[RMDB]
RNA sequence: GGGAACGACUCGAGUAGAGUCGAAAACAUCUCUUGCUUCAAAGGAUUGAUAGGAAUUUGUCCAAACAGAUGAGGGUUCGAUUGAGACAACUGAACUCCCUGAUGCGGCAGGUCUUAGGAGGUCAUGCAGAUUAUGUCAUUUCGAUGACAUAAUCUGAAAAGAAACAACAACAACAAC
Reactivity to DMS in 0.01 (KOAc 150mM, MgCl2 10mM, bicine 150mM(pH8.5), 24C), signal-to-noise 9, nucleotides 027 to 126: c160a100u000c040u000c030u010u000g020c060u000u000c050a050a100a130g010g010a070u000u000g010a240u000a060g010g010a080a080u000u000u000g010u010c050c040a080a130a100c060a040g000a120u010g010a100g000g000g010u000u000c030g010a070u000u000g010a210g000a100c110a030a040c060u000g000a040a040c030u000c010c010c010u000g000a130u000g020c130g020g010c030a020g010g000u000c030u000u000a070g000g000a110g000g010u000c040a060u000g010
Reactivity to 2A3 in 0.01 (KOAc 150mM, MgCl2 10mM, bicine 150mM(pH8.5), 24C), signal-to-noise 8, nucleotides 027 to 126: c030a100u020c030u010c000u050u090g050c020u110u080c060a100a080a090g060g010a090u070u150g030a040u120a070g050g050a110a110u080u050u080g030u000c010c000a050a080a050c020a030g080a110u100g040a150g030g020g020u020u030c020g020a060u010u170g060a110g040a110c070a060a020c080u080g010a020a010c010u030c000c010c000u070g020a090u070g020c050g010g000c010a020g020g000u010c010u050u040a050g010g060a030g040g000u030c020a020u110g020
Overview
The data come from the RNA Mapping Database (RMDB), library OK2TST. An RNA of 177 nucleotides, treated with DMS and 2A3 and read out base by base. Values cover nucleotides 27 to 126. The reactions ran in a buffer of 150 mM KOAc, 10 mM MgCl2 and 150 mM bicine (pH 8.5), at 24 C.